[RMDB]
RNA sequence: GGGAACGACUCGAGUAGAGUCGAAAAUUAACUGGAAAUUGCGAUAAAACGGCAUGGCCGAGCACUUCGGCAGUGAUGGCCGUCCCAUCCGAAAUAUAAAAUACACUUCUUUCCACGCUGACUCCUGAUAUCGAUGCCGAUUCGUCGGCAUCGAUAUAAAAGAAACAACAACAACAAC
Reactivity to DMS in 0.01 (KOAc 150mM, MgCl2 10mM, bicine 150mM(pH8.5), 24C), signal-to-noise 1, nucleotides 027 to 126: u020u000a070a150c040u000g000g030a040a100a060u020u010g010c100g040a200u000a030a120a090a090c030g010g000c060a050u060g090g040c010c010g040a040g010c150a070c180u000u020c050g020g000c000a030g010u000g010a070u000g010g000c000c000g020u000c100c060c080a060u020c040c050g020a040a030a040u000a130u000a120a110a020a080u000a130c130a120c080u000u000c050u000u000u000c060c010a000c100g010c060u000g000a090c090u000c010c080u000g010
Reactivity to 2A3 in 0.01 (KOAc 150mM, MgCl2 10mM, bicine 150mM(pH8.5), 24C), signal-to-noise 1, nucleotides 027 to 126: u030u020a060a000c020u020g050g040a070a020a090u100u190g060c050g040a010u100a040a090a000a010c080g050g010c030a040u040g030g000c050c000g040a060g090c080a050c170u150u010c010g040g010c010a000g040u030g090a120u140g070g000c000c000g030u000c010c000c020a010u000c000c010g030a000a100a000u170a010u070a010a120a060a000u120a050c030a040c040u060u070c080u020u070u000c020c000a040c010g030c040u020g030a020c030u030c010c010u040g030
Chemical mapping of a 177-nucleotide RNA with DMS and 2A3. For 2A3, 882 sequencing reads were counted. In probing experiments dimethyl sulfate is read out at A N1 and C N3, which are open when not base-paired. For DMS, 676 sequencing reads were counted. DMS adducts were read by reverse transcription with MarathonRT. The RNA was probed in 150 mM KOAc, 10 mM MgCl2 and 150 mM bicine (pH 8.5) at 24 C. For 2A3 the reverse transcriptase was SuperScript II with manganese.